RNA sequence: GGGAACGACUCGAGUAGAGUCGAAAAGCGCGUUAAUACGGCCGGUAUGCCUUCUUGCCCAACAAUAUGAGGUAGAAGCGUGUGGGGGAAGGGACACCGUCGUUUUGUUAAAGAAGGUAUAUUGCGCCGAGGCAAAUAGUUUCGACUAUUUGCCUCGAAAAGAAACAACAACAACAAC
Reactivity to 2A3 in 0.01 (KOAc 150mM, MgCl2 10mM, bicine 150mM(pH8.5), 24C), signal-to-noise 2, nucleotides 027 to 126: g010c030g000c010g030u040u100a040a010u080a090c040g000g020c040c020g020g010u010a010u040g040c000c020u020u000c000u010u070g100c010c010c020a000a010c010a000a040u110a050u140g050a030g070g040u080a000g010a010a010g040c030g000u070g010u060g030g000g040g000g020a000a000g030g000g000a010c010a010c040c010g060u030c000g010u000u000u080u020g010u010u110a000a040a030g050a050a000g060g010u070a020u000a000u060u090g000c020g000c020
Reactivity to DMS in 0.01 (KOAc 150mM, MgCl2 10mM, bicine 150mM(pH8.5), 24C), signal-to-noise 3, nucleotides 027 to 126: g000c050g000c030g020u000u000a080a090u010a050c060g010g000c030c030g020g010u010a020u000g000c000c000u000u000c000u000u000g000c030c050c030a040a050c040a080a110u020a050u000g010a120g020g010u000a000g000a000a120g010c160g020u000g000u000g000g000g000g010g020a070a040g020g000g010a060c070a020c020c010g010u000c030g010u000u000u000u000g000u000u000a080a040a060g000a040a040g010g010u010a030u010a060u010u000g000c080g010c020
This 177-nucleotide RNA was probed chemically with 2A3 and DMS.
For DMS, 3,516 sequencing reads were counted.
Values cover nucleotides 27 to 126.
For 2A3, 2,903 sequencing reads were counted.
Conditions: 150 mM KOAc, 10 mM MgCl2 and 150 mM bicine (pH 8.5), 24 C.
DMS adducts were read by reverse transcription with MarathonRT.